The record gives the reactivity of an RNA of 207 nucleotides to DMS and 2A3. DMS adducts were read by reverse transcription with MarathonRT. DMS (dimethyl sulfate) methylates the pairing face of unpaired adenines and cytosines. For 2A3 the reverse transcriptase was SuperScript II with manganese. The reactions ran in a buffer of 150 mM KOAc, 10 mM MgCl2 and 150 mM bicine (pH 8.5), at 24 C.

RNA sequence: GGGAACGACUCGAGUAGAGUCGAAAAAGGUUAAAUUGGAAAAGGCUUUAUUUUGGGUUGAUUGGAGUCUCAGAGAAUGGCUAGUAUUAUGCGAGCGUGUGCAGUAAAGAACAAGCGCCAGUGCCUGAUCCUGCUUUCUUCCUAGUGGGAACAAGAACAUAAUAAUCCUGUUCGCAGGAUUAUUAUGAAAAGAAACAACAACAACAAC
Reactivity to DMS in 0.01 (KOAc 150mM, MgCl2 10mM, bicine 150mM(pH8.5), 24C), signal-to-noise 2, nucleotides 027 to 156: a050g030g000u000u010a030a050a120u010u000g020g010a040a110a140a120g000g030c030u000u000u000a070u020u000u000u010g020g000g020u010u000g020a100u000u010g000g020a090g000u010c040u000c050a090g010a090g000a080a060u000g010g050c070u000a060g030u000a090u000u010a070u000g000c040g010a100g030c040g020u000g020u000g000c060a080g000u010a050a070a130g010a060a070c030a040a100g010c040g030c020c020a050g010u000g000c040c030u010g010a080u000c030c020u000g020c050u000u000u010c080u010u000c070c010u000a070g050u000g010g000g000a050a050c070a080a080g020a080a180
Reactivity to 2A3 in 0.01 (KOAc 150mM, MgCl2 10mM, bicine 150mM(pH8.5), 24C), signal-to-noise 2, nucleotides 027 to 156: a000g060g000u080u030a030a110a140u200u140g000g020a070a100a090a080g040g010c020u120u140u070a110u080u190u130u100g020g000g010u000u080g050a060u020u080g030g000a000g030u010c030u000c100a020g010a000g050a110a020u070g020g000c020u020a010g040u030a060u250u030a020u170g090c040g030a040g020c080g010u060g040u040g020c030a020g000u050a040a150a010g030a120a000c080a110a010g000c020g060c080c020a040g020u020g070c010c000u030g000a040u000c000c000u010g020c010u020u100u010c010u050u040c000c020u020a040g000u030g070g040g030a060a000c000a070a050g160a050a010